[RMDB]
The record gives the reactivity of an RNA of 177 nucleotides to 2A3 and DMS. 2A3 adducts were read by reverse transcription with SuperScript II with manganese. In probing experiments dimethyl sulfate is read out at A N1 and C N3, which are open when not base-paired. For DMS the reverse transcriptase was MarathonRT.
RNA sequence: GGGAACGACUCGAGUAGAGUCGAAAACUUAACGCGUUCGCGCGUUAAGAAACAACAUAAACAUCGAGUUGACGAUGACUCAAAUACCGUCAGUGUAGACGGAAAGCAUUCGCUUCGGCGAAUGCAACCCGAUUGUAAGGUUCGCCUUACAAUCGGGAAAAGAAACAACAACAACAAC
Reactivity to 2A3 in 0.01 (KOAc 150mM, MgCl2 10mM, bicine 150mM(pH8.5), 24C), signal-to-noise 3, nucleotides 027 to 126: c000u000u000a000a020c000g010c000g020u040u080c190g000c000g000c020g100u000u010a000a010g010a020a050a000c030a020a010c010a060u260a120a130a020c030a060u070c060g000a030g050u020u060g190a140c060g050a080u090g020a050c000u010c080a050a060a030u160a100c030c020g000u000c020a090g090u060g190u300a100g040a010c000g000g000a030a060a000g010c000a010u000u000c000g000c020u000u090c200g110g000c000g000a000a010u000g000c010a000a010
Reactivity to DMS in 0.01 (KOAc 150mM, MgCl2 10mM, bicine 150mM(pH8.5), 24C), signal-to-noise 2, nucleotides 027 to 126: c000u000u000a000a020c010g030c010g000u020u000c250g060c020g010c000g000u000u010a010a010g000a140a130a060c080a080a070c160a090u000a180a120a100c030a030u010c070g000a110g020u000u000g000a080c110g000a010u000g000a140c110u010c080a100a030a110u000a050c020c040g000u010c000a070g000u000g000u010a120g010a040c000g010g000a080a050a110g000c000a000u000u000c010g020c020u000u000c220g010g010c000g000a010a000u000g000c000a030a040

Reactivities are given for positions 27 through 126.